[RMDB]
Record summary: The record gives the reactivity of an RNA of 207 nucleotides to DMS and 2A3. It was measured as part of the RMDB library M2RFPK.
RNA sequence: GGGAACGACUCGAGUAGAGUCGAAAACGGUCCUGCCAGGAGACCGUAACGAGGACAUGUCGCCUCGAAUGGCGUCGGGGAGCCGGCAGCUUACCCCAAGGAUGAGCGCCUAAUGCCGGUACCCGGGUAUACGCUACCCCGUUCGCGGGGUAGCGAACUACUAACCAUUGUUCGCAAUGGUUAGUAGAAAAGAAACAACAACAACAAC
Reactivity to DMS in 0.01 (KOAc 150mM, MgCl2 10mM, bicine 150mM(pH8.5), 24C), signal-to-noise 1, nucleotides 027 to 156: c020g000g010u000c000c000u020g070c080c130a120g000g040a070g000a020c010c010g080u000a080a030c030g000a110g010g010a180c070a150u020g000u000c040g030c000c020u000c020g030a060a090u030g030g030c030g010u000c030g070g000g000g010a300g010c010c000g000g000c000a210g000c010u000u000a040c010c010c040c070a230a100g030g010a060u000g000a030g040c040g000c170c250u000a080a120u000g010c030c020g030g000u000a040c020c010c000g030g010g010u030a040u000a030c020g030c010u000a000c000c000c000c000g070u000u000c180g020c070g000g010g000g010u010a010g040c000g000a000a030
Reactivity to 2A3 in 0.01 (KOAc 150mM, MgCl2 10mM, bicine 150mM(pH8.5), 24C), signal-to-noise 2, nucleotides 027 to 156: c010g000g010u020c020c030u040g030c010c000a040g000g060a070g030a030c020c000g030u020a020a000c000g000a010g000g020a030c070a210u240g050u130c110g010c000c000u000c010g020a050a060u050g010g000c010g060u040c000g000g000g020g010a100g100c000c010g000g000c000a000g000c000u000u030a040c020c030c060c120a050a090g050g000a140u090g020a000g000c020g100c030c030u060a150a060u060g000c000c000g010g010u010a020c000c000c040g010g000g000u210a160u030a050c010g030c010u030a010c010c010c010c010g040u040u030c210g020c010g060g010g000g010u010a000g000c000g000a010a010